[RMDB]
RNA sequence: GGGAACGACUCGAGUAGAGUCGAAAAAAGAGCUGGCCUGGCGUCGUCCGGCUCCCUCGACCGCACCGGAGCGCUAGAAAAGGUCCUCGGACUUUCUUCUAUCUCCGAAGCCGGUUUGAGGCCCGGCGCAAUGAUAUGACUUCGGUCAUAUCAUUGCAAAAGAAACAACAACAACAAC
Reactivity to DMS in 0.01 (KOAc 150mM, MgCl2 10mM, bicine 150mM(pH8.5), 24C), signal-to-noise 1, nucleotides 027 to 126: a030a050g010a010g030c040u000g000g000c190c040u000g010g000c020g020u000c120g020u000c000c020g000g020c000u000c030c000c000u000c020g000a000c010c020g030c020a240c140c010g010g000a010g000c030g000c040u010a010g000a020a000a050a030g000g000u010c000c030u000c300g030g000a010c000u000u000u000c200u000u000c000u000a000u010c000u000c020c000g000a140a170g010c230c050g010g000u000u000u030g030a020g000g000c090c010c030g010g000c140
Reactivity to 2A3 in 0.01 (KOAc 150mM, MgCl2 10mM, bicine 150mM(pH8.5), 24C), signal-to-noise 1, nucleotides 027 to 126: a010a010g020a000g000c020u020g020g000c010c040u070g160g010c040g090u090c010g000u040c000c010g010g000c030u020c000c010c000u000c000g020a000c000c010g020c030a050c140c020g010g000a010g000c060g040c030u000a010g000a000a010a010a000g000g010u000c030c000u100c180g020g030a000c000u030u020u050c020u000u000c010u080a300u300c010u000c000c000g000a000a000g000c060c010g000g060u010u030u300g000a010g000g000c030c000c010g060g040c060
The record gives the reactivity of an RNA of 177 nucleotides to DMS and 2A3. The RNA was probed in 150 mM KOAc, 10 mM MgCl2 and 150 mM bicine (pH 8.5) at 24 C. For DMS the reverse transcriptase was MarathonRT. The DMS profile rests on 1,205 reads.